[RMDB]
RNA sequence: GGGAACGACUCGAGUAGAGUCGAAAAUCGUGGGACGGGGAUUUUCCGUAACUCUACCUCCCAACCCAUCAAGAAGGGGGAGAUGUUUCGGUUGGGGUAAGAAAGAAGGAUCCCUGACGGAACCCAUCUUCAACCUCCCGCUUACAGGAACCAGGUACCAUCUAUUCGUAUUCGUACGAAUAGAUGGAAAAGAAACAACAACAACAAC
Reactivity to DMS in 0.01 (KOAc 150mM, MgCl2 10mM, bicine 150mM(pH8.5), 24C), signal-to-noise 2, nucleotides 027 to 156: u010c070g000u000g020g010g020a150c060g000g000g030g000a100u010u000u010u000c030c100g000u000a080a100c070u000c020u000a110c010c040u000c010c000c010a040a160c040c030c050a110u000c100a120a130g020a080a130g020g000g030g030g010a130g000a100u000g000u010u000u000c010g040g020u010u000g030g030g010g040u000a100a130g000a080a120a140g000a100a150g000g010a080u000c010c000c010u000g050a130c050g010g010a030a070c020c080c070a070u000c020u030u000c040a040a130c020c030u000c000c010c000g010c080u000u000a090c070a070g030g010a080a120c030c090a110g000g020u010a290
Reactivity to 2A3 in 0.01 (KOAc 150mM, MgCl2 10mM, bicine 150mM(pH8.5), 24C), signal-to-noise 4, nucleotides 027 to 156: u100c020g010u040g000g030g050a060c100g010g000g000g050a060u080u070u150u100c040c030g020u060a060a050c010u030c020u060a210c020c010u040c020c000c000a010a030c020c010c010a050u110c070a070a180g120a050a160g070g000g000g030g000a020g010a010u040g040u040u110u130c080g030g000u020u020g020g000g010g000u030a060a020g080a120a100a010g060a040a050g060g030a030u080c000c000c020u020g010a010c010g030g020a010a030c000c060c000a030u040c020u060u020c020a090a130c020c010u020c010c000c010g030c060u040u110a060c040a070g080g000a040a030c100c050a030g040g020u150a050
An RNA of 207 nucleotides, treated with DMS and 2A3 and read out base by base.
Values are in units of 0.01, from 0 to 300, in steps of 10.
Source: RMDB library OK3TST, as collected in RNAgym.
The DMS profile rests on 2,953 reads.
The RNA was probed in 150 mM KOAc, 10 mM MgCl2 and 150 mM bicine (pH 8.5) at 24 C.